[RMDB]
RNA sequence: GGGAACGACUCGAGUAGAGUCGAAAAGAUAUGGAGCCUGAACUACGCUGUAAAGUUGCUAAGCCGAAGAACGCUAUCGGAAACGAUAGCGGGAGGCUUAGCAACUGCAGCGCAGGCUCCUAAGUCACACCAAAUGUAAGUUCGCUUACAUUUGGUGAAAAGAAACAACAACAACAAC
Reactivity to 2A3 in 0.01 (KOAc 150mM, MgCl2 10mM, bicine 150mM(pH8.5), 24C), signal-to-noise 2, nucleotides 027 to 126: g030a010u090a060u200g010g000a000g040c040c000u020g010a110a100c160u210a040c300g020c020u000g020u090a300a300a110g010u020u020g000c000u000a000a020g000c000c000g120a170a030g030a060a000c000g010c010u020a000u000c000g060g000a120a030a030c010g000a000u010a000g020c000g020g000g000a010g020g000c000u000u010a000g000c020a010a000c000u000g010c000a010g000c010g000c000a000g010g000c000u000c010c000u010a010a010g000u010c030a020
Reactivity to DMS in 0.01 (KOAc 150mM, MgCl2 10mM, bicine 150mM(pH8.5), 24C), signal-to-noise 3, nucleotides 027 to 126: g010a050u010a300u000g010g000a010g020c000c000u010g010a140a080c170u020a300c050g000c010u010g010u000a080a080a050g030u000u000g000c000u000a000a000g010c000c010g000a140a180g000a130a180c020g000c000u000a000u010c000g020g000a160a080a180c000g000a010u000a010g020c000g000g010g030a030g000g000c000u000u000a000g010c000a000a000c000u010g000c030a010g010c020g000c010a000g020g000c000u000c010c000u000a000a070g000u010c010a300